[RMDB]
RNA sequence: GGGAACGACUCGAGUAGAGUCGAAAAGAUAUGGAGCCUGAACUACGAGAAUGUAGGCCAACAGCAAUGUCUAAUCGGAAACGAUUAGACAUUGACAUGGCUAUUAUAGCUCGCAGGCUCCUAAGUCCCUAUCAGAACUGUUCGCAGUUCUGAUAGGAAAAGAAACAACAACAACAAC
Reactivity to 2A3 in 0.01 (KOAc 150mM, MgCl2 10mM, bicine 150mM(pH8.5), 24C), signal-to-noise 3, nucleotides 027 to 126: g050a020u100a050u230g000g000a010g030c000c020u050g030a140a120c150u260a110c300g010a000g030a160a150u210g080u140a070g100g270c010c000a140a130c140a130g090c020a040a000u000g010u000c000u000a000a000u000c010g040g000a080a100a030c000g000a000u000u000a000g010a010c010a010u010u010g010a010c000a060u050g000g020c020u010a030u140u180a090u090a050g080c000u010c010g040c000a000g000g000c000u000c000c000u010a000a010g000u000c010
Reactivity to DMS in 0.01 (KOAc 150mM, MgCl2 10mM, bicine 150mM(pH8.5), 24C), signal-to-noise 4, nucleotides 027 to 126: g000a070u010a250u010g010g000a020g020c000c000u000g000a100a060c200u000a300c020g030a020g000a080a120u010g020u000a120g010g020c000c000a010a070c300a210g000c000a000a000u000g010u010c010u000a000a020u000c000g000g010a130a090a180c010g030a010u000u010a000g000a000c000a000u000u000g000a060c080a210u000g010g000c000u000a040u000u000a050u000a150g020c010u000c000g000c010a020g000g010c010u000c000c000u000a010a100g000u010c020

The record gives the reactivity of an RNA of 177 nucleotides to 2A3 and DMS. The reactions ran in a buffer of 150 mM KOAc, 10 mM MgCl2 and 150 mM bicine (pH 8.5), at 24 C. For DMS, 4,088 sequencing reads were counted.